[RMDB]
RNA sequence: GGGAACGACUCGAGUAGAGUCGAAAAGUAAUAGAUAACUGGAUGCAGCGUAGGUAACAACGCAUAUCCAGUACGAAUGGUACCUGUAAAUAAAAUAUGUUGCCUAGUACAAGUACCAACAGAAGGAUAAGCGAUGGUGAUGUCAAUCACAUUUGCACGGUACCGUAUGGUUCGCCAUACGGUACCGAAAAGAAACAACAACAACAAC
Reactivity to 2A3 in 0.01 (KOAc 150mM, MgCl2 10mM, bicine 150mM(pH8.5), 24C), signal-to-noise 2, nucleotides 027 to 156: g010u020a030a110u050a140g100a010u170a160a000c000u000g020g000a020u040g110c090a070g000c300g000u010a120g060g080u120a040a010c050a010a000c000g020c010a030u010a010u180c000c000a000g000u000a000c000g070a190a100u070g000g000u000a000c010c010u030g010u010a030a090a220u160a000a050a020a040u050a020u070g050u040u000g020c000c010u010a000g020u000a000c000a000a000g000u010a020c000c000a010a020c020a000g070a110a010g060g020a050u030a050a010g000c040g010a000u080g020g120u030g030a010u060g110u180c120a010a010u050c000a010c030a110u000u030u060g000c010a020
Reactivity to DMS in 0.01 (KOAc 150mM, MgCl2 10mM, bicine 150mM(pH8.5), 24C), signal-to-noise 1, nucleotides 027 to 156: g000u000a140a170u000a200g010a070u030a070a150c000u000g030g000a060u000g000c110a130g020c000g010u000a090g060g020u000a080a060c030a120a110c000g000c020a110u010a100u000c010c010a020g000u000a060c120g000a060a080u000g020g070u000a020c010c000u000g010u000a000a090a160u000a030a020a070a120u000a140u000g000u000u000g030c030c010u000a190g010u000a020c000a000a030g000u000a030c000c000a020a110c110a090g010a010a130g040g000a150u000a020a120g030c030g030a070u000g000g020u020g030a110u000g000u070c180a060a080u000c050a050c030a110u000u000u000g050c070a080